Background:
Source: RMDB library OK1LIB, as collected in RNAgym. An RNA of 177 nucleotides, treated with 2A3 and DMS and read out base by base. Values cover nucleotides 27 to 126.

[RMDB]
RNA sequence: GGGAACGACUCGAGUAGAGUCGAAAAGCAAGCCAUGGCAGGAAUCUUGGAAGAACAAGGCUCAGACACGGACACCCCUAGGGUAUACAAUGACAGAGAUCUUCUAGACUAGGUGCGAGAGGCCGAGCAGGUAUGCCGGAUUCGUCCGGCAUACCUGAAAAGAAACAACAACAACAAC
Reactivity to 2A3 in 0.01 (KOAc 150mM, MgCl2 10mM, bicine 150mM(pH8.5), 24C), signal-to-noise 4, nucleotides 027 to 126: g040c030a040a020g030c000c010a070u100g040g000c020a020g060g040a090a060u030c020u050u050g040g010a100a050g040a120a070c050a090a030g020g020c030u030c060a040g010a060c050a010c070g010g020a000c000a020c000c010c000c040u060a060g000g010g080u030a020u030a090c170a110a200u220g070a030c050a040g110a010g020a090u010c000u080u010c020u070a010g010a070c040u020a050g000g060u030g050c030g000a070g000a010g030g000c020c000g020a010g040
Reactivity to DMS in 0.01 (KOAc 150mM, MgCl2 10mM, bicine 150mM(pH8.5), 24C), signal-to-noise 3, nucleotides 027 to 126: g010c030a160a130g000c040c040a110u020g020g000c000a120g000g010a070a060u010c080u010u000g000g010a070a120g000a140a140c110a130a120g010g010c110u000c020a030g020a110c060a020c080g010g000a080c080a060c020c020c020c010u000a050g000g020g050u030a020u030a120c160a060a080u040g000a020c150a100g020a060g010a060u020c060u000u000c060u000a070g000a080c030u040a030g000g000u000g000c070g000a120g000a110g000g000c020c030g000a070g010
About this RNA: DMS adducts were read by reverse transcription with MarathonRT. Conditions: 150 mM KOAc, 10 mM MgCl2 and 150 mM bicine (pH 8.5), 24 C.